[RMDB]
RNA sequence: GGGAACGACUCGAGUAGAGUCGAAAACCGGAAGUAACAUUGCACGAUGGCUGCCCAUUACAAGGCUGCAGUCUCUAGAGUUGCCUUGGUGGAGACCGAGGUGACUUGUGAGAUAGUGAAACCCGUACCGCCGGAGGCUGGAAACAGAGCACGGAAACUGUACGCAAUUGUUCGCAAUUGCGUACAGAAAAGAAACAACAACAACAAC
Reactivity to 2A3 in 0.01 (KOAc 150mM, MgCl2 10mM, bicine 150mM(pH8.5), 24C), signal-to-noise 2, nucleotides 027 to 156: c030c000g010g030a090a040g010u060a020a030c030a080u100u140g020c040a030c050g060a090u130g080g010c050u060g000c000c010c070a050u160u190a150c130a110a090g040g000c060u110g010c050a010g050u000c000u000c030u100a060g000a010g010u000u000g000c010c000u020u000g040g020u040g040g190a130g080a030c010c000g010a000g000g000u020g000a000c010u000u010g020u030g020a040g020a030u070a100g060u090g030a020a050a020c090c030c020g050u100a070c010c060g030c010c010g000g000a050g130g000c010u020g000g040a070a000a000c040a010g020a010g030c060a010c050g050g000a010a030a040
About this RNA:
Source: RMDB library ARCHII, as collected in RNAgym. Chemical mapping of a 207-nucleotide RNA with 2A3. 2A3 is a SHAPE reagent: it acylates the 2'-hydroxyl of flexible nucleotides of all four kinds. The reactions ran in a buffer of 150 mM KOAc, 10 mM MgCl2 and 150 mM bicine (pH 8.5), at 24 C.